[RMDB]
RNA sequence: GGGAACGACUCGAGUAGAGUCGAAAACCAGGAUGUUGGCUUAGAAGCAGCCACUCAUUCAAAGAGUGCGUAAUAGCUCACUGGUCGAGUGAUCCUGCGCCGAAGAUUUCCGGGGCUAAAACUUACUACCGAAGCUACGGCAUCAGUAAUGAUGGGACAUUACCCAGCUGUUCGCAGCUGGGUAAUGAAAAGAAACAACAACAACAAC
Reactivity to 2A3 in 0.01 (KOAc 150mM, MgCl2 10mM, bicine 150mM(pH8.5), 24C), signal-to-noise 2, nucleotides 027 to 156: c000c000a030g070g030a040u060g020u090u060g020g000c050u120u170a030g010a100a020g000c060a000g020c040c020a010c010u000c010a080u300u140c040a060a090a070g000a010g000u040g000c020g060u130a140a150u070a210g010c020u000c040a050c060u030g030g000u070c060g050a020g040u080g030a030u050c000c000u030g040c020g020c030c000g040a030a020g030a140u040u030u070c030c000g030g000g060g050c040u050a000a040a130a000c040u130u160a020c020u080a120c010c010g000a010a000g070c040u100a030c060g010g000c010a020u020c010a080g120u140a130a120u050g060a020u050g020g000g040a000
Reactivity to DMS in 0.01 (KOAc 150mM, MgCl2 10mM, bicine 150mM(pH8.5), 24C), signal-to-noise 2, nucleotides 027 to 156: c010c000a150g020g000a110u000g010u010u000g010g000c040u010u000a090g010a140a110g050c030a230g020c030c010a030c010u020c010a110u040u000c240a130a100a200g000a090g030u000g060c050g060u000a080a120u010a140g010c000u010c020a130c070u000g020g030u000c080g000a060g040u010g020a100u010c040c010u000g000c060g030c000c010g000a060a080g000a240u020u020u000c000c010g000g010g020g020c050u000a050a170a130a060c050u020u000a050c050u010a030c030c020g020a140a110g080c060u010a060c020g020g000c040a030u000c060a090g030u020a080a060u010g000a060u010g020g040g000a200
Structure probing data (2A3 and DMS) for a 207-nucleotide construct. For DMS, 2,199 sequencing reads were counted. 2A3 adducts were read by reverse transcription with SuperScript II with manganese. Source: RMDB library OK3TST, as collected in RNAgym.